[RMDB]
This 177-nucleotide RNA was probed chemically with 2A3 and DMS. 2A3 adducts were read by reverse transcription with SuperScript II with manganese.
RNA sequence: GGGAACGACUCGAGUAGAGUCGAAAAGAUAUGGAUCGUCCCUGCUGCGAGGAUCGUAACUCGGAAACGAGUUACGGGAGCAGUAGGGCGAUCCUAAGUCAAAGUACAGAUGUUCGCAUCUGUACAACAACCAUUACUCGUUCGCGAGUAAUGGUUGAAAAGAAACAACAACAACAAC
Reactivity to 2A3 in 0.01 (KOAc 150mM, MgCl2 10mM, bicine 150mM(pH8.5), 24C), signal-to-noise 3, nucleotides 027 to 126: g030a040u070a050u190g030g000a000u000c010g300u300c000c020c010u000g000c010u000g030c000g180a300g040g040a020u010c020g010u010a000a000c000u000c000g030g020a070a070a050c020g000a000g010u000u010a010c010g000g010g000a010g000c000a000g010u010a000g010g010g000c000g000a000u020c000c000u000a000a000g000u030c050a180a080a050g000u000a010c000a000g010a000u020g070u080u180c300g020c180a000u000c000u000g000u000a000c000a010a000
Reactivity to DMS in 0.01 (KOAc 150mM, MgCl2 10mM, bicine 150mM(pH8.5), 24C), signal-to-noise 3, nucleotides 027 to 126: g000a060u000a300u010g000g010a000u000c000g020u020c010c010c000u000g010c000u000g010c010g020a060g040g010a050u010c000g030u000a010a000c000u000c000g000g010a080a130a270c000g000a020g010u000u000a010c000g010g000g000a040g020c000a010g000u000a000g000g000g020c010g000a000u000c000c000u000a010a050g000u010c040a100a140a170g020u000a010c020a000g000a010u000g000u000u030c300g020c010a000u000c010u010g010u000a000c000a100a230